An RNA of 177 nucleotides, treated with 2A3 and read out base by base. 2A3 adducts were read by reverse transcription with SuperScript II with manganese.

RNA sequence: GGGAACGACUCGAGUAGAGUCGAAAAGUAGCAAUCAUCGUUCUAGUGUGGACUUACUUCAUUGUCAUUAAAGAAAUUCUUCCUAAAAAUAUAGGAUUUAUUUCAUUAGUAAUUCUAUCAAUAGUUCGGACAGUGGGAGAUUCGUCUCCCACUGUCCAAAAGAAACAACAACAACAAC
Reactivity to 2A3 in 0.01 (KOAc 150mM, MgCl2 10mM, bicine 150mM(pH8.5), 24C), signal-to-noise 1, nucleotides 027 to 126: g050u100a000g020c080a140a100u060c000a020u030c080g110u090u020c030u030a050g050u020g000u050g150g000a000c000u000u050a000c000u060u090c060a220u090u100g150u110c030a030u020u280a050a010a100g010a000a000a000u010u030c000u000u000c000c000u030a030a070a040a060a000u260a090u070a110g000g000a000u040u000u000a000u000u000u000c010a040u000u040a000g000u050a050a030u000u060c000u000a090u190c010a000a170u040a020g040u050u050c000
Conditions: 150 mM KOAc, 10 mM MgCl2 and 150 mM bicine (pH 8.5), 24 C. For 2A3, 369 sequencing reads were counted.